RNA sequence: GGGAACGACUCGAGUAGAGUCGAAAAGCUGGCGACGGUGAUCGGCGAGGUCACCGACGGCGACCGGCUGCAGAUCACCUGGCACGGCGAGACGGUGGUCGACGUGCCGCCGCGCACCGUAGCUCACGCUGAGUUACGCUUUCGAGCGUAACUCAGCAAAAGAAACAACAACAACAAC
Reactivity to DMS in 0.01 (KOAc 150mM, MgCl2 10mM, bicine 150mM(pH8.5), 24C), signal-to-noise 2, nucleotides 027 to 126: g060c030u000g000g010c010g020a110c040g020g010u000g000a020u000c010g000g040c150g020a270g030g000u000c020a000c020c030g050a030c160g040g030c000g020a070c010c000g010g010c030u000g000c100a040g020a080u000c080a100c030c020u000g000g020c050a060c250g000g000c000g000a070g000a070c060g000g000u000g020g020u000c060g010a120c170g010u000g000c030c000g020c010c000g020c040g010c050a080c020c020g030u000a060g000c020u000c150a100c080
Reactivity to 2A3 in 0.01 (KOAc 150mM, MgCl2 10mM, bicine 150mM(pH8.5), 24C), signal-to-noise 1, nucleotides 027 to 126: g040c080u030g030g040c050g010a050c040g010g000u030g000a050u040c030g050g030c110g050a090g100g040u110c040a000c020c000g010a000c000g030g010c010g030a120c010c010g010g060c080u050g000c050a030g000a160u080c020a020c110c050u040g060g010c020a040c030g040g000c040g020a030g040a020c030g020g080u080g040g010u030c010g110a100c080g020u130g000c000c000g010c000c000g000c010g030c040a070c020c010g050u010a070g000c030u070c080a070c130